[RMDB]
RNA sequence: GGGAACGACUCGAGUAGAGUCGAAAAUCGACUUCCUUCGGGAAGUCGAAAAUAACGGUCGGCUCAUGAAGCUACUCGAACAUGCUGCUCGACCUAGACUAAAAAGAAUCUCGUUCGCGAGAUUCAAGCAAACAUACAAGUUCGCUUGUAUGUUUGCAAAAGAAACAACAACAACAAC
Reactivity to 2A3 in 0.01 (KOAc 150mM, MgCl2 10mM, bicine 150mM(pH8.5), 24C), signal-to-noise 2, nucleotides 027 to 126: u020c000g000a000c010u010u010c010c000u020u060c160g080g000g000a000a000g000u000c000g000a000a000a000a010u050a020a020c060g000g000u000c010g000g000c010u010c020a000u030g030a050a050g050c100u110a120c070u060c110g030a100a060c000a000u020g040c050u020g010c110u150c130g010a010c010c000u000a030g040a020c030u050a020a030a060a060a030g020a000a000u000c000u000c000g040u040u040c260g010c000g080a000g000a000u020u010c000a000a010
Reactivity to DMS in 0.01 (KOAc 150mM, MgCl2 10mM, bicine 150mM(pH8.5), 24C), signal-to-noise 2, nucleotides 027 to 126: u000c000g020a000c000u000u000c000c000u000u020c230g030g000g010a030a010g010u000c000g020a010a010a050a090u000a080a090c180g030g020u000c040g030g020c010u000c010a030u000g000a070a160g020c080u000a050c130u010c050g000a080a250c070a010u000g000c180u000g000c030u020c020g010a020c000c000u000a020g010a100c100u020a060a070a040a130a080g000a020a000u000c000u000c010g020u000u020c160g030c010g000a010g020a000u000u000c000a060a120
Conditions: 150 mM KOAc, 10 mM MgCl2 and 150 mM bicine (pH 8.5), 24 C. An RNA of 177 nucleotides, treated with 2A3 and DMS and read out base by base. For 2A3, 3,117 sequencing reads were counted. DMS adducts were read by reverse transcription with MarathonRT. For DMS, 1,389 sequencing reads were counted.